Chemical mapping of a 207-nucleotide RNA with DMS and 2A3. For 2A3, 1,687 sequencing reads were counted. The reactions ran in a buffer of 150 mM KOAc, 10 mM MgCl2 and 150 mM bicine (pH 8.5), at 24 C.

RNA sequence: GGGAACGACUCGAGUAGAGUCGAAAAGCUUCUGCCUCCUCAGUCGGGGGCGAUACUCCUGCUGAAAAUGGUACUGUAUCUGGUAUUCUCGGAAGUUUUGCUUCUGCAUUCACUUCCGCUGCAUUAUUGGCUAAACCAAAGGUAGAAAAUACCACUAAUUAACGACUGGAUUCGUCCAGUCGUUAAUAAAAGAAACAACAACAACAAC
Reactivity to DMS in 0.01 (KOAc 150mM, MgCl2 10mM, bicine 150mM(pH8.5), 24C), signal-to-noise 2, nucleotides 027 to 156: g020c090u000u000c050u010g000c000c000u000c050c070u000c050a170g020u020c270g000g000g000g000g000c020g000a070u000a160c010u000c010c020u010g030c000u020g010a030a120a100a080u000g020g040u000a090c050u000g000u000a070u000c060u000g050g040u000a090u010u000c030u010c020g010g000a050a060g030u010u010u000u000g030c000u010u000c300u000g030c040a000u010u010c220a060c000u000u000c000c010g010c070u000g030c040a060u000u000a050u010u000g020g010c070u010a100a100a270c240c010a030a050a040g000g020u000a040g000a100a010a070a170u000a030c000c000a070c030u010a090
Reactivity to 2A3 in 0.01 (KOAc 150mM, MgCl2 10mM, bicine 150mM(pH8.5), 24C), signal-to-noise 3, nucleotides 027 to 156: g000c020u030u040c060u100g000c000c000u010c010c020u060c090a110g090u090c080g020g000g000g010g000c000g000a000u010a000c020u000c000c000u030g040c040u050g080a110a080a050a100u170g010g020u060a060c060u070g030u170a130u060c050u070g000g000u040a020u060u050c060u010c010g010g000a010a010g000u010u020u030u000g020c010u090u200c080u300g000c010a020u040u060c110a010c000u000u000c000c010g000c010u010g000c010a050u010u080a120u130u050g010g030c070u120a080a110a090c000c020a060a080a030g010g000u000a010g060a000a120a000a020u050a010c000c000a020c050u090a040
Source: RMDB library OK3TST, as collected in RNAgym. DMS adducts were read by reverse transcription with MarathonRT. 2A3 adducts were read by reverse transcription with SuperScript II with manganese.